[RMDB]
RNA sequence: GGGAACGACUCGAGUAGAGUCGAAAAAUACACUGCACGUGCGUGCGAGCAGUUUUCGAAAUAAUCGUACGUACGUAAAGACCCAACUCUACUCGAUGCGAGGGUCAGCAAAGUCGUUCCCAUAUAAGCAUGAGAUAUGAUUCGUCAUAUCUCAUGCAAAAGAAACAACAACAACAAC
Reactivity to DMS in 0.01 (KOAc 150mM, MgCl2 10mM, bicine 150mM(pH8.5), 24C), signal-to-noise 2, nucleotides 027 to 126: a060u000a140c150a110c050u000g000c220a020c020g010u000g000c000g010u000g000c000g020a000g030c250a100g000u000u010u000u010c140g010a030a020a040u000a050a130u000c030g000u000a010c020g050u000a000c010g000u000a030a200a050g000a120c070c040c000a140a060c000u010c010u010a000c000u000c020g000a120u000g000c020g000a080g000g000g000u000c060a160g030c040a110a080a010g010u000c000g000u010u010c000c000c000a010u000a010u000a060a080
Reactivity to 2A3 in 0.01 (KOAc 150mM, MgCl2 10mM, bicine 150mM(pH8.5), 24C), signal-to-noise 5, nucleotides 027 to 126: a010u140a030c070a020c100u150g050c090a000c010g000u000g000c000g000u010g010c000g010a010g030c170a070g020u030u040u080u240c160g140a060a030a030u140a020a050u040c000g010u010a000c010g010u000a000c000g010u000a010a000a010g000a010c000c000c000a020a020c000u000c000u000a000c000u020c010g030a030u050g010c010g020a130g000g060g020u050c020a010g010c010a070a300a010g000u000c030g010u000u000c000c000c000a000u000a000u000a000a000